[RMDB]
RNA sequence: GGGAACGACUCGAGUAGAGUCGAAAAUGAUGCAGUACCUGUCAAAUUCGAUGUACUAACAUUGCUCGUAUUUGCAAUUGUGUUAAUGAUUGUCUCUGUAUUAGGAAGUUUAUUCUCCAUUUUAACAUAUACAAGCGCUGUUCGCAGCGCUUGUAUAAAAAGAAACAACAACAACAAC
Reactivity to DMS in 0.01 (KOAc 150mM, MgCl2 10mM, bicine 150mM(pH8.5), 24C), signal-to-noise 2, nucleotides 027 to 126: u060g020a050u020g010c020a090g000u000a100c120c040u000g010u020c080a060a000a060u000u000c050g030a120u020g010u000a030c040u010a050a110c120a080u000u000g000c030u010c070g010u000a020u000u020u000g010c030a030a000u000u030g000u000g010u000u050a000a040u030g000a120u010u000g000u000c030u000c040u000g000u000a160u000u010a160g000g000a080a050g050u000u050u000a060u020u000c020u000c000c020a120u000u020u020u060a000a070c090a150
Reactivity to 2A3 in 0.01 (KOAc 150mM, MgCl2 10mM, bicine 150mM(pH8.5), 24C), signal-to-noise 2, nucleotides 027 to 126: u140g030a000u050g000c000a000g070u140a030c000c000u170g070u070c040a060a060a070u070u000c050g000a050u240g000u030a090c030u000a120a000c030a020u060u000g000c000u030c030g120u020a020u010u010u240g040c000a030a000u040u090g000u040g110u000u040a270a070u170g130a200u010u000g200u000c000u000c000u050g050u060a150u000u000a170g020g180a210a070g120u080u200u050a080u200u000c090u010c020c010a030u030u000u150u300a080a100c060a010